[RMDB]
RNA sequence: GGGAACGACUCGAGUAGAGUCGAAAAGAUAUGGAUACGCAGCCGAUAAGAAGGUGUCGGAAACGACACUCUUCUUUUGACGGCUGAAAUCCUAAGUCAAACACAACUUUCUUCGGAAAGUUGUGAACUACGUAGAAGUGUUCGCACUUCUACGUAGAAAAGAAACAACAACAACAAC
Reactivity to DMS in 0.01 (KOAc 150mM, MgCl2 10mM, bicine 150mM(pH8.5), 24C), signal-to-noise 6, nucleotides 027 to 126: g000a040u000a230u010g010g010a010u000a040c300g020c000a010g000c000c010g020a150u010a010a010g010a010a010g010g010u000g010u000c000g010g010a080a060a150c000g000a010c010a000c010u020c000u000u000c000u010u000u010u000g010a220c090g010g000c000u010g000a000a010a020u000c000c000u000a050a150g010u000c030a130a120a300c010a000c000a000a000c000u000u000u000c000u000u010c220g020g000a020a010a010g010u000u010g000u000g010a040a140
Reactivity to 2A3 in 0.01 (KOAc 150mM, MgCl2 10mM, bicine 150mM(pH8.5), 24C), signal-to-noise 3, nucleotides 027 to 126: g020a020u060a030u140g000g010a010u010a030c220g000c050a000g000c000c020g070a120u060a210a000g000a000a000g030g000u010g000u000c000g020g020a050a030a020c010g000a000c000a010c010u050c000u000u010c000u010u000u020u070g060a020c000g000g000c000u000g000a000a010a000u000c000c000u030a110a040g050u030c050a140a090a030c010a000c000a000a020c010u020u010u000c010u060u090c220g160g000a010a010a000g010u000u000g000u000g000a000a010